[RMDB]
RNA sequence: GGGAACGACUCGAGUAGAGUCGAAAAACGGAUAGAUUCGUCUAUCCGUGCAUCUCAUAACAGACAGAGAAAGUGUGCUAAGAUCUCACUUAGAUAAAGAGAAGAGAGUCGAGUUCGCUCGACUCAACCGGUAUCUGAAAUUCGUUUCAGAUACCGGAAAAGAAACAACAACAACAAC
Reactivity to DMS in 0.01 (KOAc 150mM, MgCl2 10mM, bicine 150mM(pH8.5), 24C), signal-to-noise 3, nucleotides 027 to 126: a010c010g020g000a020u000a010g010a010u000u000c170g010u000c000u000a000u000c000c000g020u000g010c210a080u000c000u000c000a070u010a060a110c160a090g000a090c090a080g020a100g000a080a060a050g010u000g010u000g010c070u000a050a040g000a050u010c010u010c030a050c030u010u000a080g000a130u010a030a030a080g010a080g000a060a140g000a110g000a020g000u000c020g000a010g000u010u010c230g020c000u000c000g000a010c000u000c010a020a040
Reactivity to 2A3 in 0.01 (KOAc 150mM, MgCl2 10mM, bicine 150mM(pH8.5), 24C), signal-to-noise 3, nucleotides 027 to 126: a000c000g020g000a000u010a010g020a010u000u050c170g020u000c140u000a010u000c000c000g000u000g010c040a060u030c010u000c020a060u110a080a070c050a050g250a020c050a020g130a000g110a180a090a050g100u070g000u030g000c050u090a080a110g020a280u070c010u000c040a030c030u020u030a040g040a150u160a200a150a010g140a000g020a170a040g130a020g000a000g040u000c000g000a000g000u020u060c170g040c060u000c000g000a000c000u010c010a000a000